[RMDB]
RNA sequence: GGGAACGACUCGAGUAGAGUCGAAAAUAUUAGGGUGUGAGAGUAUCUCUCUCCCAGCCGGUUCCCGCAGCCAUCUUUUUCGACUUUACUUGGGUUAGCUGCGCGAACUGGCUGGCGUUCCCAGCAAUGAUAACUAAGCUUUCGAGCUUAGUUAUCAAAAAGAAACAACAACAACAAC
Reactivity to 2A3 in 0.01 (KOAc 150mM, MgCl2 10mM, bicine 150mM(pH8.5), 24C), signal-to-noise 4, nucleotides 027 to 126: u110a030u060u090a030g000g010g000u000g000u000g010a000g010a010g040u300a300u100c050u000c000u000c000u000c030c030c000a000g000c000c000g000g000u000u000c030c010c010g000c000a000g000c020c040a110u050c120u030u170u020u050u070c030g030a030c010u160u210u250a060c030u170u230g090g000g020u050u130a020g000c000u000g010c000g000c000g000a000a010c000u010g000g000c000u000g000g000c000g000u000u000c000c010c010a000g000c030a010a170
Reactivity to DMS in 0.01 (KOAc 150mM, MgCl2 10mM, bicine 150mM(pH8.5), 24C), signal-to-noise 4, nucleotides 027 to 126: u000a050u000u000a190g010g000g020u000g020u000g000a020g010a080g010u010a120u010c090u000c010u000c020u000c030c000c000a010g010c010c010g020g000u000u000c000c110c000g010c010a010g010c010c140a050u010c020u010u000u000u000u000c040g010a050c040u000u000u000a060c140u000u010g010g010g010u000u000a040g010c000u000g000c010g020c300g000a010a020c020u000g000g000c000u000g000g000c000g010u000u000c010c010c000a200g010c170a080a070
The record gives the reactivity of an RNA of 177 nucleotides to 2A3 and DMS. Source: RMDB library M2PK90, as collected in RNAgym. The reactions ran in a buffer of 150 mM KOAc, 10 mM MgCl2 and 150 mM bicine (pH 8.5), at 24 C. DMS adducts were read by reverse transcription with MarathonRT.